[RMDB]
RNA sequence: GGGAACGACUCGAGUAGAGUCGAAAAAGUCGAGCAAUCGGAGGGGAGUUCCGCCCUUUGCAGGAGUUGUCCCUCUUUCUCUCUUGGUAUGGAAGAAUAAGCUUGCCAGCCCGAGAGGGCCGUUCCCGGCUGUAUAUAACUUCGGUUAUAUACAGCCAAAAGAAACAACAACAACAAC
Reactivity to 2A3 in 0.01 (KOAc 150mM, MgCl2 10mM, bicine 150mM(pH8.5), 24C), signal-to-noise 1, nucleotides 027 to 126: a020g120u080c030g010a010g070c060a060a130u130c080g060g020a040g000g020g010g020a030g020u040u020c000c020g000c000c030c070u100u160u260g100c130a090g000g030a030g030u060u050g110u130c000c000c010u000c020u000u070u020c010u000c010u040c010u000u050g000g000u060a080u100g030g060a050a090g020a090a260u090a100a000g030c010u000u030g060c010c010a010g010c000c010c000g020a010g010a000g000g000g010c060c000g000u000u050c000c010c000
Reactivity to DMS in 0.01 (KOAc 150mM, MgCl2 10mM, bicine 150mM(pH8.5), 24C), signal-to-noise 2, nucleotides 027 to 126: a070g010u010c030g010a120g010c110a070a080u010c160g000g010a060g000g010g000g020a120g020u000u000c000c010g000c020c160c100u000u000u000g020c020a130g010g000a040g010u000u000g000u010c000c000c000u010c130u000u020u010c000u000c000u010c000u010u010g000g000u000a050u000g000g010a020a020g000a070a020u000a130a060g010c160u000u000g000c020c000a050g010c050c010c030g000a040g010a080g020g010g010c230c000g020u010u000c000c000c020

This 177-nucleotide RNA was probed chemically with 2A3 and DMS. Conditions: 150 mM KOAc, 10 mM MgCl2 and 150 mM bicine (pH 8.5), 24 C. The 2A3 profile rests on 1,757 reads. For DMS, 2,515 sequencing reads were counted.